[RMDB]
RNA sequence: GGGAACGACUCGAGUAGAGUCGAAAAUAACACUGGCGGCUGCGUAUCACUCUAGGGUACGUGAUAGUGGGAUAUAAGAAGCACUGGUACAUGCCGGCAGGGACAGUUAAGAGAUGGCCGCAGUCUCAAAAGGGGUCAUUCUUCGGAAUGACCCCAACAAGGUAUACGAGUUCGCUCGUAUACCUUGAAAAGAAACAACAACAACAAC
Reactivity to DMS in 0.01 (KOAc 150mM, MgCl2 10mM, bicine 150mM(pH8.5), 24C), signal-to-noise 2, nucleotides 027 to 156: u000a080a120c030a060c000u010g030g000c020g020g010c020u010g010c020g000u000a020u000c010a100c060u010c170u000a130g030g030g000u000a000c030g020u010g010a080u010a060g010u000g000g040g040a090u000a090u000a100a160g000a120a170g000c030a030c020u000g020g010u000a060c110a150u000g020c000c000g000g000c060a060g000g000g040a030c050a090g020u000u000a100a150g010a050g030a060u000g030g030c020c050g040c040a220g010u010c010u010c010a060a060a160a110g020g000g040g020u010c000a020u000u000c000u000u010c300g010g000a030a030u000g010a020c000c000c000c000a000a010
Reactivity to 2A3 in 0.01 (KOAc 150mM, MgCl2 10mM, bicine 150mM(pH8.5), 24C), signal-to-noise 2, nucleotides 027 to 156: u090a020a000c020a020c020u040g090g040c010g000g010c000u020g000c010g000u010a010u010c020a070c200u120c120u200a130g200g000g000u020a010c010g020u030g050a030u060a050g010u050g030g040g060a020u070a030u050a170a050g110a060a020g050c010a010c040u020g050g000u090a050c010a050u120g020c010c000g030g000c010a020g000g010g030a030c050a060g020u040u060a110a020g010a000g010a030u080g040g020c010c010g030c060a020g020u000c000u000c000a080a100a010a030g000g000g000g010u000c000a010u020u020c010u040u040c110g000g000a030a000u000g000a000c010c000c000c000a000a000
Conditions: 150 mM KOAc, 10 mM MgCl2 and 150 mM bicine (pH 8.5), 24 C. The record gives the reactivity of an RNA of 207 nucleotides to DMS and 2A3. Reactivities are given for positions 27 through 156. For 2A3 the reverse transcriptase was SuperScript II with manganese. For DMS, 5,134 sequencing reads were counted. For 2A3, 2,458 sequencing reads were counted.